[RMDB]
RNA sequence: GGGAACGACUCGAGUAGAGUCGAAAAGGGCACAGGAGUCAAUACAAAAAUGCUUUUGCAUAAGUGUAAUUUAGCAAAGGGGAUCAAGACCUGAGAUGUAAGAGCCAGAAUCCCAGCUCUGCCACUUACUGGCAAUGUGACCAUGGGCCAGUAACUACGAGGGUAUUAGGUUCGCCUAAUACCCUCGAAAAGAAACAACAACAACAAC
Reactivity to DMS in 0.01 (KOAc 150mM, MgCl2 10mM, bicine 150mM(pH8.5), 24C), signal-to-noise 1, nucleotides 027 to 156: g070g020g000c030a060c070a020g000g010a170g020u010c030a030a110u000a130c140a000a020a080a090a080u000g000c020u000u010u000u000g050c060a060u000a070a050g040u000g010u020a080a180u010u000u000a080g000c000a070a150a060g000g040g010g000a220u020c050a100a000g000a130c000c020u000g010a100g010a140u020g010u000a020a000g000a080g000c060c070a100g000a070a100u020c020c060c080a210g030c060u000c070u010g000c040c060a140c070u020u000a090c000u010g000g000c020a000a060u000g010u020g020a080c120c000a100u000g020g040g000c030c030a010g000u000a020a070c060u000a100
Reactivity to 2A3 in 0.01 (KOAc 150mM, MgCl2 10mM, bicine 150mM(pH8.5), 24C), signal-to-noise 1, nucleotides 027 to 156: g020g010g030c010a010c020a020g030g030a010g010u030c030a030a030u070a180c150a030a170a040a020a020u080g040c030u070u160u160u140g030c040a020u010a140a120g030u010g010u080a100a220u060u140u240a010g010c040a020a030a070g020g000g040g000a010u110c060a080a000g060a090c030c050u090g010a040g010a090u060g000u040a020a080g030a000g010c050c000a030g040a110a010u000c010c020c000a000g000c000u020c030u030g060c110c000a080c040u040u050a000c000u000g000g000c000a020a020u050g010u080g130a060c030c000a070u060g000g160g000c020c000a000g040u060a020a020c030u110a060
Source information:
The record gives the reactivity of an RNA of 207 nucleotides to DMS and 2A3. For DMS the reverse transcriptase was MarathonRT. Conditions: 150 mM KOAc, 10 mM MgCl2 and 150 mM bicine (pH 8.5), 24 C.